[RMDB]
RNA sequence: GGGAACGACUCGAGUAGAGUCGAAAAGAUAUGGAAUGGUGAUGAAGAGCUUUGAUCGACGCUCGGAAACGAGCGUCGGGAGCUCCAUCCCAUUCCUAAGUCAAAGUGUGCAGUUCGCUGCACACAAGUAGGUUAUUUUGUUCGCAAAAUAACCUACAAAAGAAACAACAACAACAAC
Reactivity to DMS in 0.01 (KOAc 150mM, MgCl2 10mM, bicine 150mM(pH8.5), 24C), signal-to-noise 3, nucleotides 027 to 126: g000a030u010a270u000g000g000a010a000u000g010g020u010g020a030u000g010a300a220g020a040g010c010u000u000u020g000a090u010c000g000a020c000g020c000u000c000g040g000a040a020a150c010g000a020g070c020g030u020c000g000g010g000a000g030c020u010c220c060a020u000c030c020c000a010u010u000c000c000u000a010a040g000u000c020a120a130a190g010u000g010u010g020c000a020g000u000u010c250g020c010u000g000c000a010c000a000c010a010a080
Reactivity to 2A3 in 0.01 (KOAc 150mM, MgCl2 10mM, bicine 150mM(pH8.5), 24C), signal-to-noise 3, nucleotides 027 to 126: g000a010u040a030u110g010g010a010a000u000g010g110u300g110a020u030g050a230a300g050a020g140c020u300u300u060g040a050u110c020g000a020c010g010c010u000c020g000g000a020a030a010c020g010a010g000c000g030u010c020g000g000g010a000g000c000u020c080c000a010u000c010c010c000a010u000u010c000c010u000a010a000g010u000c040a060a080a170g000u000g000u000g010c000a000g010u040u090c220g100c200u010g000c000a000c000a000c000a010a020

Chemical mapping of a 177-nucleotide RNA with DMS and 2A3.
It was measured as part of the RMDB library TTRDES.
The reactions ran in a buffer of 150 mM KOAc, 10 mM MgCl2 and 150 mM bicine (pH 8.5), at 24 C.